[RMDB]
RNA sequence: GGGAACGACUCGAGUAGAGUCGAAAAGAUAGAUAGUACUCGUAAAAACUCUCUUUCGCAGGCCGCGUAUUUUGAGAGACGAAGCCGUGAAGUAGCGAAAGCUACGACGAAGCGCGUGAACGGCCGAUGCGCGAACAGCAUCACGUACGAGUACGAAGCAUUUACGUAUCUUCGGAUACGUAAAUGCAAAAGAAACAACAACAACAAC
Reactivity to 2A3 in 0.01 (KOAc 150mM, MgCl2 10mM, bicine 150mM(pH8.5), 24C), signal-to-noise 1, nucleotides 027 to 156: g110a030u210a000g060a050u130a040g000u020a000c000u000c010g000u020a020a050a050a080a060c010u010c010u020c010u020u050u100c050g010c040a080g150g080c060c110g020c070g010u180a170u030u100u090u110g020a000g000a000g040a000c020g040a010a070g020c000c050g020u070g070a110a020g010u000a000g000c000g020a050a010a020g000c000u000a000c000g010a000c020g070a140a030g020c000g010c020g030u060g060a030a000c000g010g020c010c040g030a030u000g020c060g010c070g030a070a010c050a070g020c010a000u000c000a000c030g000u000a000c000g010a000g000u010a000c000g000a020a000